[RMDB]
RNA sequence: GGGAACGACUCGAGUAGAGUCGAAAAUAUCCUGCGUUCGCGCAGGAUACAGCACAAAACUCGGAGGGCGCGCACUCGGAGACAAAACAAAAAGCGAAGGAAGUGAGCUUAGAUUCGUCUAAGCUAAAGACGUACAUGAUUUCGAUCAUGUACGUCUAAAAGAAACAACAACAACAAC
Reactivity to 2A3 in 0.01 (KOAc 150mM, MgCl2 10mM, bicine 150mM(pH8.5), 24C), signal-to-noise 1, nucleotides 027 to 126: u040a010u010c000c010u020g010c010g010u030u050c210g010c010g010c040a000g000g000a000u010a000c010a010g050c060a010c010a070a140a110a030c030u030c040g080g010a040g000g030g020c040g000c020g000c020a000c000u010c020g040g000a030g030a030c020a000a110a040a010c070a050a040a000a030a020g100c070g060a020a000g060g020a060a030g140u160g160a010g030c000u000u000a000g010a000u020u050c050g040u030c100u000a000a000g000c000u000a080a070
Reactivity to DMS in 0.01 (KOAc 150mM, MgCl2 10mM, bicine 150mM(pH8.5), 24C), signal-to-noise 2, nucleotides 027 to 126: u000a010u000c000c000u000g000c000g000u000u000c240g040c010g040c010a000g010g010a000u000a000c080a110g030c100a110c100a030a070a080a120c040u000c060g000g010a090g000g020g040c040g000c040g010c050a030c030u000c000g000g010a060g000a110c140a020a050a080a070c110a060a140a030a090a070g030c060g020a070a080g000g000a070a060g020u010g000a000g000c010u000u000a000g000a070u010u020c210g020u000c040u000a020a000g000c010u000a030a080

Structure probing data (2A3 and DMS) for a 177-nucleotide construct. Source: RMDB library M2PK50, as collected in RNAgym. Reactivities are given for positions 27 through 126. The RNA was probed in 150 mM KOAc, 10 mM MgCl2 and 150 mM bicine (pH 8.5) at 24 C. For 2A3, 1,624 sequencing reads were counted.